Background
The record gives the reactivity of an RNA of 177 nucleotides to DMS and 2A3. For 2A3, 1,470 sequencing reads were counted.

[RMDB]
RNA sequence: GGGAACGACUCGAGUAGAGUCGAAAAGUUGGAGCGUUCGCGCUCCAACAAAUAAGGGAAGUCGAGUGCACCCAGCACAGUCUUAAUAAGACAAAACGACAAAAAUCUCAUCCUUCGGGAUGAGAAAUCAUCAUCCAAUGUUCGCAUUGGAUGAUGAAAAAGAAACAACAACAACAAC
Reactivity to DMS in 0.01 (KOAc 150mM, MgCl2 10mM, bicine 150mM(pH8.5), 24C), signal-to-noise 1, nucleotides 027 to 126: g010u000u000g000g000a010g000c000g050u020u050c220g020c040g040c020u000c000c000a010a010c020a020a060a030u010a060a080g000g010g050a100a130g000u000c000g000a160g010u000g000c000a080c000c000c000a260g000c020a000c010a150g000u000c000u000u000a060a140u020a150a050g000a000c020a040a020a020a290c140g040a030c020a000a110a000a120a120u000c000u000c000a020u000c000c000u000u040c100g020g020g010a020u000g000a000g000a000a020a090
Reactivity to 2A3 in 0.01 (KOAc 150mM, MgCl2 10mM, bicine 150mM(pH8.5), 24C), signal-to-noise 1, nucleotides 027 to 126: g000u010u010g000g010a020g020c030g000u070u080c180g000c000g090c140u070c000c000a000a000c010a000a000a010u100a010a010g060g010g050a220a020g010u000c030g020a020g010u040g000c010a010c000c000c030a000g010c020a000c010a020g010u000c000u010u140a180a090u180a130a050g000a000c000a010a160a030a090c000g000a010c040a010a090a000a030a050u000c000u000c000a000u000c000c010u000u090c290g100g000g000a010u000g000a000g000a010a000a010
For DMS, 902 sequencing reads were counted. The reactions ran in a buffer of 150 mM KOAc, 10 mM MgCl2 and 150 mM bicine (pH 8.5), at 24 C.